[RMDB]
RNA sequence: GGGAACGACUCGAGUAGAGUCGAAAAAGUUCGGCUCUGUCAGCCCGGCUGGGUCCGGGUGGGGGCCGGCACAGAGGGACACACCGGGCCGGGGCGCCGAGGAUAGCUACCGCCCGCAGGGAUAGUACCUCUCGACGUAAUUCGUUACGUCGAGAGGAAAAGAAACAACAACAACAAC
Reactivity to DMS in 0.01 (KOAc 150mM, MgCl2 10mM, bicine 150mM(pH8.5), 24C), signal-to-noise 1, nucleotides 027 to 126: a090g010u050u020c000g000g000c000u000c000u020g000u020c160a300g000c030c000c000g020g050c020u040g040g080g000u070c050c000g030g050g080u000g000g030g000g000g000c000c040g000g030c120a040c120a080g040a150g000g000g000a140c070a130c070a130c110c100g000g000g020c020c000g040g000g000g000c000g080c060c110g090a090g000g040a050u030a130g000c040u000a130c030c120g000c050c000c020g020c040a120g000g000g000a020u020a130g000u040a090
This 177-nucleotide RNA was probed chemically with DMS.
The data come from the RNA Mapping Database (RMDB), library RFM100.
The RNA was probed in 150 mM KOAc, 10 mM MgCl2 and 150 mM bicine (pH 8.5) at 24 C.